[RMDB]
RNA sequence: GGGAACGACUCGAGUAGAGUCGAAAAGAUGAUAGUCGCACUGUCCUUAGACAGUGCACGAAAGAAUCUUAGUUCUUAGUGUCUAGCUAUAGACACUGAAGUGUAAGCACUUCUCGUGGCUAUCAUACAUAGGUGUGUGAUUCGUUGCAUAUCUAUGAAAAGAAACAACAACAACAAC
Reactivity to DMS in 0.01 (KOAc 150mM, MgCl2 10mM, bicine 150mM(pH8.5), 24C), signal-to-noise 9, nucleotides 027 to 126: g010a040u000g010a010u000a010g010u000c070g010c000a010c000u000g000u000c000c300u030u040a110g010a010c000a010g010u000g010c000a020c050g000a010a010a010g000a020a010u010c140u030u020a080g010u000u000c000u000u000a010g010u000g010u000c000u000a020g010c270u070a110u000a000g000a010c000a000c000u000g010a000a000g010u000g010u020a140a160g020c020a010c010u000u000c000u000c010g010u140g010g000c000u000a000u000c000a010u000a140
Reactivity to 2A3 in 0.01 (KOAc 150mM, MgCl2 10mM, bicine 150mM(pH8.5), 24C), signal-to-noise 9, nucleotides 027 to 126: g130a000u010g000a000u000a000g010u010c030g000c010a000c000u000g010u010c040c060u100u070a080g000a000c000a000g000u000g000c000a000c000g000a000a000a000g020a000a010u080c070u150u110a070g020u050u000c000u000u000a000g000u000g000u000c000u000a020g020c030u090a090u020a120g000a000c000a000c000u000g020a010a000g000u010g010u100a120a070g090c010a010c010u000u000c000u000c010g010u020g000g000c000u000a000u000c000a000u020a030

About this RNA
Chemical mapping of a 177-nucleotide RNA with DMS and 2A3. The DMS profile rests on 199,531 reads. The RNA was probed in 150 mM KOAc, 10 mM MgCl2 and 150 mM bicine (pH 8.5) at 24 C. It was measured as part of the RMDB library OK1LIB. For 2A3 the reverse transcriptase was SuperScript II with manganese.